[RMDB]
RNA sequence: GGGAACGACUCGAGUAGAGUCGAAAAGAAAGAAAGAAAGAACUCGUGUUUGAUUCGUCGCAUGGCCGGGUUGAAAGGGGUAAAAGCUGGGGUGACGACCGGAUGAAAAAUCCGGGGGGCGAAGCAACUGACUAGUUUGGUUCGCCAAACUAGUCAGAAAAGAAACAACAACAACAAC
Reactivity to 2A3 in 0.01 (KOAc 150mM, MgCl2 10mM, bicine 150mM(pH8.5), 24C), signal-to-noise 2, nucleotides 027 to 126: g120a020a100a000g050a020a070a010g090a080a060a000g030a030a030c000u030c100g040u050g170u030u100u140g090a100u040u090c060g010u050c020g010c100a040u050g030g040c030c040g000g000g060u040u040g050a100a050a030g050g000g000g000u090a100a110a000a000g040c050u050g000g000g000g000u010g020a020c000g010a040c020c010g040g000a000u020g090a040a140a000a000a060u000c000c000g010g000g000g000g050g000c030g020a040a000g000c010a020a030
Reactivity to DMS in 0.01 (KOAc 150mM, MgCl2 10mM, bicine 150mM(pH8.5), 24C), signal-to-noise 3, nucleotides 027 to 126: g030a120a130a070g010a090a070a110g010a080a120a120g010a110a050c040u000c060g010u020g020u030u000u010g000a090u010u000c010g020u010c050g000c080a080u010g000g050c070c030g000g000g000u020u030g010a020a100a060g020g000g030g010u040a030a040a050a060g000c030u010g000g010g000g000u010g000a070c070g000a140c020c010g020g000a000u010g000a020a080a090a110a050u000c000c000g000g010g010g000g000g010c050g000a040a050g010c150a050a170